An RNA of 177 nucleotides, treated with 2A3 and read out base by base. The RNA was probed in 150 mM KOAc, 10 mM MgCl2 and 150 mM bicine (pH 8.5) at 24 C. For 2A3 the reverse transcriptase was SuperScript II with manganese. High 2A3 reactivity points to a flexible backbone, as in loops and unpaired stretches.
[RMDB]
RNA sequence: GGGAACGACUCGAGUAGAGUCGAAAAGGUUAUUUUCGUUCUUCAUGUUAUGGAGUGUGAGUGAUGAGGAGCUUGCUCUUUUAAGCUCAUAUUACGUAAUAAGUUAAUACUGGAGCGAGAAUAAUUUCUCUUCGGUUACAUUCGUGUAACCGAAGAGAAAAGAAACAACAACAACAAC
Reactivity to 2A3 in 0.01 (KOAc 150mM, MgCl2 10mM, bicine 150mM(pH8.5), 24C), signal-to-noise 1, nucleotides 027 to 126: g130g030u000u000a000u000u000u000u000c010g010u000u030c000u050u030c030a100u190g000u000u000a000u000g010g000a000g000u000g000u010g000a000g000u070g000a090u130g000a000g040g000a000g020c020u120u080g040c000u000c000u010u040u000u010a020a000g000c000u000c000a000u000a000u000u000a000c010g010u000a000a000u020a010a020g040u120u150a140a110u150a160c180u020g020g020a000g020c000g000a000g000a000a000u000a000a010u040u020u000
Values cover nucleotides 27 to 126.